[RMDB]
RNA sequence: GGGAACGACUCGAGUAGAGUCGAAAAGCAUGUUUAUGUGAACCUAAGUAUGAAUUUCAGUGACUGUAGAUUAGAAGGACUGAUUAUAGCAUAGGCUGCUUGGUGUUCACUUUAUUUGCAUCUGUGAGUUUCCAACAAGCCCUAAGUUUACUGACAAGCAUACCAGUGAGUUCGCUCACUGGUAUGCAAAAGAAACAACAACAACAAC
Reactivity to 2A3 in 0.01 (KOAc 150mM, MgCl2 10mM, bicine 150mM(pH8.5), 24C), signal-to-noise 1, nucleotides 027 to 156: g000c020a010u060g070u020u050u090a170u240g000u040g000a000a000c000c040u000a020a010g000u020a170u270g090a220a100u050u090u010c060a030g000u010g230a200c030u020g070u210a100g040a260u070u180a060g080a180a020g010g030a000c000u010g040a050u070u140a150u100a110g040c040a050u060a170g070g030c020u020g000c000u000u000g050g000u140g000u090u000c000a000c000u010u100u000a090u000u070u020g000c000a030u010c060u020g060u020g070a050g040u010u030u000c000c020a020a030c010a060a000g070c010c010c010u040a170a020g000u030u040u070a250c060u020g050a030c030a060a030
Annotation:
The data come from the RNA Mapping Database (RMDB), library OK3TST. An RNA of 207 nucleotides, treated with 2A3 and read out base by base.